Structure probing data (DMS and 2A3) for a 207-nucleotide construct.
RNA sequence: GGGAACGACUCGAGUAGAGUCGAAAAGGGGUCAAUGCUAAGUACACUUGGAUUUAGACAUUGAGUGCACCUGAAGCCUCCACGGGUGCACAAUGAUGUGUCUUGUCAGUGUACGAUGCAUUGACGGAGGCACCCAAAAGGGCUGUUCGCAGCCCAAACUUACCCUUGGAUUCGUCCAAGGGUAAGUAAAAGAAACAACAACAACAAC
Reactivity to DMS in 0.01 (KOAc 150mM, MgCl2 10mM, bicine 150mM(pH8.5), 24C), signal-to-noise 1, nucleotides 027 to 156: g030g020g050g010u000c030a030a000u010g030c020u000a170a300g010u000a000c000a030c040u010u020g010g000a120u000u010u010a030g010a050c010a020u000u000g000a160g010u000g000c000a010c010c010u050g000a060a130g040c040c000u000c000c050a300c020g000g000g000u000g010c000a010c010a030a040u010g000a040u000g020u000g000u000c000u000u010g000u020c080a040g010u000g010u000a010c000g030a190u020g010c000a000u010u000g000a040c000g000g020a010g070g010c010a100c000c040c020a020a080a110a110g000g030g000c000u010g010u000u000c230g010c020a010g000c000c000c010a000a060
Reactivity to 2A3 in 0.01 (KOAc 150mM, MgCl2 10mM, bicine 150mM(pH8.5), 24C), signal-to-noise 4, nucleotides 027 to 156: g080g010g040g010u000c010a000a000u000g020c000u080a150a020g000u000a000c020a010c030u140u210g180g010a080u250u150u160a050g000a010c000a020u020u130g090a020g030u000g000c000a000c000c000u020g050a060a030g060c000c020u010c010c010a020c010g000g000g000u000g030c000a000c000a010a020u130g020a020u130g020u000g010u030c040u070u100g050u060c070a040g000u000g000u010a010c000g010a000u040g000c000a000u000u000g000a000c000g000g000a000g010g000c020a030c020c010c000a070a080a010a030g010g000g000c030u030g040u130u110c190g030c140a000g000c010c000c000a010a010

The RNA was probed in 150 mM KOAc, 10 mM MgCl2 and 150 mM bicine (pH 8.5) at 24 C.
DMS adducts were read by reverse transcription with MarathonRT.